[RMDB]
RNA sequence: GGGAACGACUCGAGUAGAGUCGAAAAGCGACGACGUUCGCGUCGUCGCAAAAUAACGCAGGCGUGGGACAACGCCAGAGAUUAACUCAAAUAGUCCCAAUAAAAUCUCACGGUUCGCCGUGAGAAACUUAGAUCCAAGGUUCGCCUUGGAUCUAAGAAAAGAAACAACAACAACAAC
Reactivity to DMS in 0.01 (KOAc 150mM, MgCl2 10mM, bicine 150mM(pH8.5), 24C), signal-to-noise 1, nucleotides 027 to 126: g000c000g020a040c000g030a000c000g040u020u000c230g020c040g080u000c000g000u000c050g000c020a020a000a030a050u000a080a230c250g020c100a010g040g000c000g020u000g000g070g050a070c020a090a100c120g030c020c050a040g000a040g000a290u000u000a080a120c000u000c010a040a010a060u000a130g000u000c000c020c000a090a110u020a110a150a170a130u000c000u000c000a020c010g010g000u000u000c150g020c030c000g000u000g000a000g000a000a000a070
Reactivity to 2A3 in 0.01 (KOAc 150mM, MgCl2 10mM, bicine 150mM(pH8.5), 24C), signal-to-noise 2, nucleotides 027 to 126: g000c030g010a030c000g010a000c030g040u070u100c240g010c000g070u010c030g070u030c000g010c000a010a000a020a000u040a020a020c090g000c130a070g030g000c060g030u080g010g000g000a010c020a300a040c150g000c000c000a000g000a000g000a030u260u290a250a180c020u020c030a030a000a000u050a040g010u000c010c000c050a010a010u070a030a050a000a040u000c030u020c000a000c000g000g020u040u050c160g070c160c000g000u010g010a000g010a000a000a000